[RMDB]
RNA sequence: GGGAACGACUCGAGUAGAGUCGAAAACGACAAACCGUAAGUUCUACUGCCCUUUAUUGUUGGGUGCACCCUGGGACCCAGUAAUACCCGGGGGGAGGCGGGGUAAACCCAUACUAUGGGAACUGCUGAAUAGUAAAUGCUUCGGCAUUUACUAUUCAAAAGAAACAACAACAACAAC
Reactivity to DMS in 0.01 (KOAc 150mM, MgCl2 10mM, bicine 150mM(pH8.5), 24C), signal-to-noise 1, nucleotides 027 to 126: c040g040a150c050a120a040a120c140c030g030u020a050a110g000u000u000c010u000a180c150u020g010c010c020c010u000u020u010a020u020u000g000u000u000g020g000g020u020g000c250a120c080c020c000u000g000g000g000a170c000c000c000a020g000u040a060a130u000a090c140c000c060g000g000g000g000g000g000a080g010g000c060g000g000g000g000u030a070a140a160c020c000c020a050u000a070c120u000a070u000g020g010g000a080a070c100u000g030c300u000
Reactivity to 2A3 in 0.01 (KOAc 150mM, MgCl2 10mM, bicine 150mM(pH8.5), 24C), signal-to-noise 1, nucleotides 027 to 126: c050g040a010c050a060a110a000c010c000g030u050a070a030g010u060u020c020u030a170c030u100g030c020c020c000u070u140u100a150u160u180g060u050u060g000g000g000u020g010c000a050c020c000c010u010g040g040g090a080c000c000c020a020g050u090a050a070u040a190c020c010c010g000g000g000g010g000g050a050g060g130c070g000g020g000g000u020a050a000a060c000c000c010a000u090a050c040u080a040u040g020g020g000a040a070c000u070g000c030u010